An RNA of 177 nucleotides, treated with DMS and 2A3 and read out base by base.
[RMDB]
RNA sequence: GGGAACGACUCGAGUAGAGUCGAAAAAGUACACUAGACUACUAGUCACAUAGUACUGAUCGCUAGCAUGCUAGGUACGUGAUCUGCUAGGAUCGAUCGAUCGCUGAUCAUACUAGUCUAGUAUAUACCUUGUGCUUACGUUCGCGUAAGCACAAGGAAAAGAAACAACAACAACAAC
Reactivity to DMS in 0.01 (KOAc 150mM, MgCl2 10mM, bicine 150mM(pH8.5), 24C), signal-to-noise 2, nucleotides 027 to 126: a060g000u020a010c040a020c000u000a010g000a000c010u000a050c060u000a070g010u000c220a150c100a100u000a080g020u010a020c050u000g000a110u000c120g000c010u000a050g010c110a050u000g000c040u010a150g000g030u020a020c160g020u010g020a070u000c060u000g000c020u010a040g000g020a010u010c040g010a080u000c100g020a080u000c090g000c090u000g000a030u000c070a070u000a030c210u000a000g000u000c000u010a020g020u000a040u000a030u000a130
Reactivity to 2A3 in 0.01 (KOAc 150mM, MgCl2 10mM, bicine 150mM(pH8.5), 24C), signal-to-noise 2, nucleotides 027 to 126: a000g080u100a030c020a000c050u000a020g010a000c010u020a010c010u060a030g030u090c030a020c010a210u140a030g050u040a080c070u030g040a030u150c090g010c110u000a050g040c050a050u300g000c010u060a050g100g000u060a020c070g000u000g000a050u010c040u020g020c010u060a070g100g050a040u110c030g000a180u100c150g000a010u050c020g040c170u080g020a010u000c020a030u030a060c030u000a020g000u000c020u030a020g020u000a020u000a010u000a040

It was measured as part of the RMDB library OK2TRN. Reactivities are given for positions 27 through 126. For DMS, 1,867 sequencing reads were counted.